[RMDB]
Annotation: The data come from the RNA Mapping Database (RMDB), library M2PK90. The record gives the reactivity of an RNA of 177 nucleotides to DMS. Values cover nucleotides 27 to 126. Conditions: 150 mM KOAc, 10 mM MgCl2 and 150 mM bicine (pH 8.5), 24 C.

RNA sequence: GGGAACGACUCGAGUAGAGUCGAAAAUUAAAGUCCCAACAUGUAAUGGCAUCUAAUAAUGACAAAAUGGGUACAUGUAAAUGUCAUAAAAUAUAGACACAAUAUAUGUGAAAGAUGCCAAAAAAAACAUUUGUCUUAGAUUCGUCUAAGACAAAUGAAAAGAAACAACAACAACAAC
Reactivity to DMS in 0.01 (KOAc 150mM, MgCl2 10mM, bicine 150mM(pH8.5), 24C), signal-to-noise 2, nucleotides 027 to 126: u000u000a100a090a130g010u000c010c000c000a120a110c190a070u020g030u000a070a110u000g000g000c020a010u010c010u000a120a100u010a140a040u020g000a050c030a050a080a110a080u000g000g010g000u000a090c010a000u010g020u000a080a120a080u010g000u000c000a010u000a050a060a080a020u000a080u000a080g000a100c070a040c100a040a110u010a020u000a000u030g000u020g020a120a110a060g000a000u000g010c000c000a010a000a000a000a040a060a030a070